[RMDB]
An RNA of 207 nucleotides, treated with 2A3 and read out base by base.
Source: RMDB library M2RFPK, as collected in RNAgym.
The 2A3 profile rests on 1,924 reads.
For 2A3 the reverse transcriptase was SuperScript II with manganese.
Values are in units of 0.01, from 0 to 300, in steps of 10.
RNA sequence: GGGAACGACUCGAGUAGAGUCGAAAAACUUUGACGGCGGUACUAUGAAUUGAUGCAAGGUGUGGAGCGACCUUAAACAGUUCUGGUGGUGCUCUGAAUGGAGUGCUCUACUGAGAUUAUAAAAUAGCAUGCAUAGAGUGCUUCGGCACUCUAUGAAGAGUAACAGGGUGUUCGCACCCUGUUACUCAAAAGAAACAACAACAACAAC
Reactivity to 2A3 in 0.01 (KOAc 150mM, MgCl2 10mM, bicine 150mM(pH8.5), 24C), signal-to-noise 3, nucleotides 027 to 156: a010c030u050u040u090g010a010c000g000g020c000g010g050u060a050c010u070a100u110g020a020a030u070u030g060a070u110g080c020a040a010g030g000u040g020u040g050g010a020g010c020g020a020c000c000u030u050a100a080a040c020a030g010u060u010c030u040g020g010u040g000g060u030g010c010u000c020u060g090a080a040u130g010g020a040g030u030g020c020u030c020u030a030c020u050g020a010g010a100u100u110a080u170a130a040a040a060u210a040g080c060a020u130g020c000a000u010a000g000a000g000u000g000c000u030u000c010g020g000c000a000c000u000c000u000a000u000g000a000a000